This 177-nucleotide RNA was probed chemically with DMS and 2A3. For DMS the reverse transcriptase was MarathonRT. The DMS profile rests on 864 reads.
[RMDB]
RNA sequence: GGGAACGACUCGAGUAGAGUCGAAAAGCCGGGAAGCAUCGCCGGCACGUCGAGCACCACAGCCACGCCGUUCGUGAUGGACACGCCGUCCAUCAGCACCGUGUCCACGGCGCGGCCAACCGUGAUACCCGACUCAGCUAUUCGUAGCUGAGUCGGGAAAAGAAACAACAACAACAAC
Reactivity to DMS in 0.01 (KOAc 150mM, MgCl2 10mM, bicine 150mM(pH8.5), 24C), signal-to-noise 2, nucleotides 027 to 126: g040c010c000g000g020g020a110a080g000c140a100u000c170g000c000c000g030g000c090a040c160g030u010c030g020a060g010c130a090c030c070a080c290a210g020c000c020a030c020g000c020c000g000u010u000c210g010u000g120a050u000g000g000a020c000a040c090g030c240c090g000u000c000c030a000u030c050a000g000c060a120c200c030g030u000g000u000c030c090a020c020g000g000c000g020c000g000g040c000c030a020a010c100c100g030u000g020a080u000a160
Reactivity to 2A3 in 0.01 (KOAc 150mM, MgCl2 10mM, bicine 150mM(pH8.5), 24C), signal-to-noise 2, nucleotides 027 to 126: g000c020c030g000g020g060a130a030g120c110a180u090c100g070c080c000g040g020c070a010c000g120u070c040g070a020g030c020a020c050c010a030c030a010g000c010c000a000c020g000c010c030g050u110u090c070g050u060g000a110u100g010g010a020c020a000c060g230c150c080g040u050c000c030a130u060c030a000g020c020a030c050c010g050u020g040u130c040c000a010c010g000g000c000g000c000g010g040c020c000a010a040c020c010g040u030g040a020u080a140